An RNA of 207 nucleotides, treated with 2A3 and read out base by base.
[RMDB]
RNA sequence: GGGAACGACUCGAGUAGAGUCGAAAAUGUGGUCACGGGGGCUGUACGGGACGUUUACGUGACUGGGCUUGUCUGCACCAUGUCGGUGUGAGUGCAGGAGCCGAGCAAUAACGACAGCAUCGACUGCGCCCGGAGAAUGUCUGGACGGUCUUUCAAGGCAAAAUGAAGUGUUCGCACUUCAUUUUGCAAAAGAAACAACAACAACAAC
Reactivity to 2A3 in 0.01 (KOAc 150mM, MgCl2 10mM, bicine 150mM(pH8.5), 24C), signal-to-noise 1, nucleotides 027 to 156: u160g060u030g010g010u060c010a010c030g010g000g020g060g000c030u120g090u230a080c040g000g080g080a030c010g080u010u060u010a100c060g000u000g040a030c020u030g000g000g000c000u060u040g020u100c010u000g000c020a000c000c000a010u050g040u110c050g020g010u120g020u010g090a080g000u000g000c020a000g000g010a000g020c000c000g010a030g030c070a030a160u050a040a010c030g060a010c050a040g010c000a070u030c040g000a060c000u020g090c060g040c020c010c040g000g000a020g050a080a130u060g030u070c000u010g010g010a020c030g000g000u000c000u060u030u060c130a090a020g040
The reactions ran in a buffer of 150 mM KOAc, 10 mM MgCl2 and 150 mM bicine (pH 8.5), at 24 C.